[RMDB]
RNA sequence: GGGAACGACUCGAGUAGAGUCGAAAAAAAAGAUAUGGAUUGACUACCCACCUCCCGAAAGGCGACGAAGGGUUCUCGGAAACGAGAACCCAGAGCCUUGAGGGAGAGGUCAAUCCUAAGUCAAAAAGUUCUACUUAAAGUUCGCUUUAAGUAGAACAAAAGAAACAACAACAACAAC
Reactivity to 2A3 in 0.01 (KOAc 150mM, MgCl2 10mM, bicine 150mM(pH8.5), 24C), signal-to-noise 1, nucleotides 027 to 126: a000a020a030a070g110a100u210a070u110g000g010a000u000u010g000a010c000u170a250c000c030c060a040c020c000u030c030c000c000g010a030a030a000g030g010c010g080a300c050g010a300a060g000g030g010u010u000c000u000c010g040g050a070a080a050c020g000a000g030a010a010c000c000c000a000g010a000g050c000c020u000u000g010a020g000g000g020a000g000a010g000g000u000c000a020a000u010c000c010u010a040a010g090u080c160a000a100a000a030a170
Reactivity to DMS in 0.01 (KOAc 150mM, MgCl2 10mM, bicine 150mM(pH8.5), 24C), signal-to-noise 2, nucleotides 027 to 126: a110a130a070a120g000a100u000a180u010g020g020a020u010u000g010a050c000u000a110c060c010c030a300c080c000u000c010c000c000g000a180a000a000g010g000c000g000a140c300g020a070a170g000g000g010u010u000c010u000c020g000g010a060a040a140c010g010a010g000a040a010c000c000c000a000g020a260g010c000c000u000u000g000a300g000g000g010a000g000a000g000g010u000c000a000a010u000c000c000u000a000a020g000u010c120a010a060a040a140a130